[RMDB]
RNA sequence: GGGAACGACUCGAGUAGAGUCGAAAAAUAGGCUUAUCAAGAGAGGUGGAGGGACUAGCCCGAUGAAACCCGGCAGCCAGAAAUGGUGCCUAUUCCUGCAGCGGAAACGUUGAAAGAUGAGCCGAUGUACGACCCGUGUUCGCACGGGUCAAAAGAAACAACAACAACAAC
Reactivity to DMS in 0.01 (KOAc 150mM, MgCl2 10mM, bicine 150mM(pH8.5), 24C), signal-to-noise 2, nucleotides 027 to 129: a120u050a030g030g020c000u020u020a050u000c030a120a100g080a160g000a130g020g040u010g030g000a050g020g080g050a300c200u030a180g020c060c020c010g030a090u010g040a060a040a030c000c040c030g020g040c000a030g040c040c020a030g030a050a060a110u010g020g000u000g000c020c020u000a120u030u020c020c010u060g000c030a050g000c050g010g010a120a050a090c000g030u000u000g010a100a080a160g000a040u040g020a000g000c000c010g010a090u000g000u040a130c120
Reactivity to 2A3 in 0.01 (KOAc 150mM, MgCl2 10mM, bicine 150mM(pH8.5), 24C), signal-to-noise 3, nucleotides 027 to 129: a020u160a020g000g000c010u000u000a000u070c090a150a020g110a060g000a030g150g020u060g030g010a030g010g050g000a040c040u090a080g130c020c020c000g130a160u070g010a010a010a000c000c000c000g000g000c030a030g130c020c000a000g030a000a050a010u090g000g000u030g010c000c000u000a030u100u050c040c000u010g070c000a000g000c000g020g000a060a000a020c030g000u000u020g050a050a050a020g000a000u010g000a000g030c030c030g030a030u080g000u030a030c020